[RMDB]
RNA sequence: GGGAACGACUCGAGUAGAGUCGAAAAAUUUCCGGUCGACAGAUCUCAGAGAGAACCUCAGCGGCCCAGUUUUUCCUUUUUUGCCUUGUGUGAAAGGGAAUUUAACACUCUGCCUUGAGCUCCCUCCACUUAGCUAGUCUUUCGAGACUAGCUAAGUAAAAGAAACAACAACAACAAC
Reactivity to DMS in 0.01 (KOAc 150mM, MgCl2 10mM, bicine 150mM(pH8.5), 24C), signal-to-noise 4, nucleotides 027 to 126: a130u010u010u010c030c060g000g010u000c040g010a080c140a060g000a030u010c030u000c060a180g010a150g020a100g000a130a140c040c030u000c050a070g020c070g010g010c020c030c080a070g010u010u010u000u000u000c010c000u000u000u000u000u000u010g070c020c020u010u030g020u020g030u000g000a010a010a010g000g000g000a010a010u010u020u010a050a120c170a090c060u000c030u000g000c050c010u010u000g000a060g000c090u000c000c010c000u020c110c150
Reactivity to 2A3 in 0.01 (KOAc 150mM, MgCl2 10mM, bicine 150mM(pH8.5), 24C), signal-to-noise 9, nucleotides 027 to 126: a000u050u040u000c020c000g010g010u020c010g020a060c030a060g050a060u020c040u040c130a060g100a000g000a020g020a170a080c010c010u040c030a040g030c040g040g010c000c030c010a010g010u000u000u000u030u060c030c000u100u180u020u020u070u110g040c020c020u270u280g100u100g010u010g210a010a010a010g040g030g030a020a020u110u100u070a080a030c040a020c020u020c010u020g030c040c000u020u050g000a010g010c010u010c010c000c010u040c030c000
Source: RMDB libraries RFM100 and RFMREP, as collected in RNAgym. The record gives the reactivity of an RNA of 177 nucleotides to DMS and 2A3. 2A3 adducts were read by reverse transcription with SuperScript II with manganese. DMS adducts were read by reverse transcription with MarathonRT.